Annotation
Structure probing data (DMS) for a 177-nucleotide construct. The data come from the RNA Mapping Database (RMDB), library OK2TRN. The reactions ran in a buffer of 150 mM KOAc, 10 mM MgCl2 and 150 mM bicine (pH 8.5), at 24 C. For DMS, 629 sequencing reads were counted.
RNA sequence: GGGAACGACUCGAGUAGAGUCGAAAAGCUGUUUCCUAGACUGUGAAAUCAAAGCUGCAGUGCUCUCUUUGAUGAGAGAGUUGGAAAAAGGAGUUGACACAAUGGAGCUCCCAUCAUAUCGCCAUUCUCGUCAAGUUGUCUUCGGACAACUUGACGAAAAAGAAACAACAACAACAAC
Reactivity to DMS in 0.01 (KOAc 150mM, MgCl2 10mM, bicine 150mM(pH8.5), 24C), signal-to-noise 1, nucleotides 027 to 126: g000c020u000g030u000u020u000c000c020u000a130g030a100c070u020g000u020g010a060a100a130u000c250a110a100a110g010c030u020g020c060a050g000u000g000c000u000c050u000c000u000u000u000g000a120u000g030a030g000a010g010a040g000u050u010g020g010a020a040a060a100a220g010g010a100g010u000u000g000a100c140a080c170a080a040u010g000g000a080g010c030u000c010c000c090a100u000c080a080u020a030u000c050g020c020c050a120u000u000c040